RNA sequence: GGGAACGACUCGAGUAGAGUCGAAAAACACCUUCUUGUUCACCCAGUACCUGUCCAAGCAAGAUCCCGAGGGCUGGGGCAAGUCGCCCGGCUUCGGCACCACCGUCGACUUCCCGGCGGUGCCGGGAUAAGGGUCAGAAUUCGUUCUGACCCUUAUAAAAGAAACAACAACAACAAC
Reactivity to DMS in 0.01 (KOAc 150mM, MgCl2 10mM, bicine 150mM(pH8.5), 24C), signal-to-noise 3, nucleotides 027 to 126: a070c110a080c090c030u010u000c040u000u000g020u000u010c090a130c030c010c010a060g020u000a080c030c020u000g010u000c040c050a070a100g010c080a100a100g010a120u000c030c000c010g020a090g000g000g030c010u000g020g040g010g000c020a040a080g000u000c090g000c010c010c010g010g020c060u000u000c040g030g000c030a040c050c010a030c010c000g010u000c050g010a090c140u000u010c030c060c000g010g000c010g030g020u000g000c000c000g010g010g000
Reactivity to 2A3 in 0.01 (KOAc 150mM, MgCl2 10mM, bicine 150mM(pH8.5), 24C), signal-to-noise 1, nucleotides 027 to 126: a020c030a080c020c000u060u000c030u050u090g020u090u150c020a130c010c020c000a060g080u180a300c010c000u040g080u070c050c030a030a050g020c020a120a020g100a200u050c090c040c050g020a050g000g050g000c040u050g020g020g000g010c030a010a060g090u130c030g060c000c000c000g040g040c130u150u150c000g040g060c040a030c040c010a040c000c020g080u060c020g080a090c000u130u090c020c040c000g030g000c040g070g000u030g000c020c000g010g000g010
Chemical mapping of a 177-nucleotide RNA with DMS and 2A3. Source: RMDB library OK2TST, as collected in RNAgym. The 2A3 profile rests on 1,079 reads.